Notes: An RNA of 207 nucleotides, treated with DMS and 2A3 and read out base by base. 2A3 adducts were read by reverse transcription with SuperScript II with manganese.

[RMDB]
RNA sequence: GGGAACGACUCGAGUAGAGUCGAAAAGGUUGCGGCGGUUGUGGAUGAGCUAUCCCAGCCGCGUGAUUGCCCGACGUGCCACGGUCGGGGGGCGUUGGUGAAGGUAUGCGCGGCCUGUGGUGGCAGUGGCAUGCUGCCGGUGAGUGAUCGCCGUCGGACCAGACCGUAUAUUCGUAUACGGUCUGGUAAAAGAAACAACAACAACAAC
Reactivity to DMS in 0.01 (KOAc 150mM, MgCl2 10mM, bicine 150mM(pH8.5), 24C), signal-to-noise 1, nucleotides 027 to 156: g000g020u010u010g010c040g030g030c030g010g030u000u010g040u020g020g010a060u010g030a210g060c100u000a130u000c040c000c040a040g000c000c000g040c030g060u000g010a080u000u000g000c020c010c000g020a120c020g050u000g000c060c050a060c010g030g000u010c020g000g040g050g010g040g000c070g020u000u000g010g010u000g000a120a110g000g000u000a050u010g050c040g040c000g010g020c030c040u000g030u000g010g010u000g000g020c000a070g060u000g040g050c070a100u000g050c000u000g050c030c020g030g030u000g000a100g020u000g030a190u000c020g000c000c020g030u000c030g060g020
Reactivity to 2A3 in 0.01 (KOAc 150mM, MgCl2 10mM, bicine 150mM(pH8.5), 24C), signal-to-noise 1, nucleotides 027 to 156: g230g000u080u050g000c040g150g000c070g010g030u100u060g030u130g110g060a040u040g060a130g090c090u130a100u210c000c000c040a000g000c000c000g000c040g000u000g030a070u020u160g050c000c000c000g000a000c000g030u240g050c040c010a020c020g090g170u140c070g050g080g000g000g010g000c080g020u090u110g040g080u130g060a090a020g030g020u040a040u010g070c040g000c000g020g050c010c000u120g000u060g070g000u050g000g000c010a000g000u040g000g160c110a090u120g020c000u040g000c000c030g000g030u020g000a100g020u110g000a060u020c000g000c000c010g000u000c020g000g020

The data come from the RNA Mapping Database (RMDB), library OK3TST.
For DMS the reverse transcriptase was MarathonRT.
Values cover nucleotides 27 to 156.
The 2A3 profile rests on 584 reads.